RNA sequence: GGGAACGACUCGAGUAGAGUCGAAAAGAUAUGGAUAUCGUACGGCCAACAGCUCGGAAACGAGACAUGGCUCGUACCGAUAUCCUAAGUCAAAAGGCCACCGGUGUGUUCGCACACCGGUGGCCAACGAAGUUAUCAAGUUCGCUUGAUAACUUCGAAAAGAAACAACAACAACAAC
Reactivity to DMS in 0.01 (KOAc 150mM, MgCl2 10mM, bicine 150mM(pH8.5), 24C), signal-to-noise 1, nucleotides 027 to 126: g000a090u000a300u000g000g000a000u000a010u000c000g020u010a020c010g000g000c000c000a050a070c300a220g020c000u000c010g000g030a120a060a180c040g010a030g020a060c090a190u000g000g000c000u030c000g040u000a000c090c060g000a000u000a000u000c000c000u000a030a040g010u010c030a130a060a120a110g010g000c010c000a020c000c000g060g000u000g110u000g050u010u000c240g010c000a040c000a010c000c000g000g040u000g000g010c010c040a000a010